[RMDB]
RNA sequence: GGGAACGACUCGAGUAGAGUCGAAAAAGCAAGGGAAUGGGAUCCCUAACAGAGAGAAAGCAGCCGUGUGGAAAGGUCGGCUGUUUCUCUAUUUAGAUGUCACAUGAUGUUCCUUCAGCUCGGUGGGAAAAUGGCAACCAUUCGUGGUUGCCAUUUUAAAAGAAACAACAACAACAAC
Reactivity to DMS in 0.01 (KOAc 150mM, MgCl2 10mM, bicine 150mM(pH8.5), 24C), signal-to-noise 1, nucleotides 027 to 126: a080g030c070a140a050g000g010g010a110a060u010g000g000g000a090u010c180c080c020u000a030a050c300a070g010a000g000a040g040a020a020a030g010c000a000g020c030c000g030u000g050u000g030g010a070a090a090g010g010u010c000g010g030c000u000g000u000u000u000c010u000c000u000a050u010u000u000a050g000a050u010g020u000c020a050c040a060u000g020a100u010g010u000u000c020c010u000u000c080a060g010c030u000c010g010g000u010g000g010g010
Reactivity to 2A3 in 0.01 (KOAc 150mM, MgCl2 10mM, bicine 150mM(pH8.5), 24C), signal-to-noise 1, nucleotides 027 to 126: a020g070c040a050a000g010g010g050a080a020u030g080g010g020a010u070c010c000c030u010a030a010c080a000g100a010g000a000g000a040a050a060g070c010a000g000c000c020g030u050g000u100g200g140a190a080a130g050g020u060c000g010g000c020u000g000u010u000u000c000u000c000u000a000u000u030u010a000g000a000u100g060u080c020a000c030a160u160g060a030u060g140u090u090c010c000u020u050c030a030g000c000u040c040g110g000u170g000g040g030
Chemical mapping of a 177-nucleotide RNA with DMS and 2A3. The 2A3 profile rests on 1,245 reads. 2A3 adducts were read by reverse transcription with SuperScript II with manganese. The reactions ran in a buffer of 150 mM KOAc, 10 mM MgCl2 and 150 mM bicine (pH 8.5), at 24 C. Values cover nucleotides 27 to 126.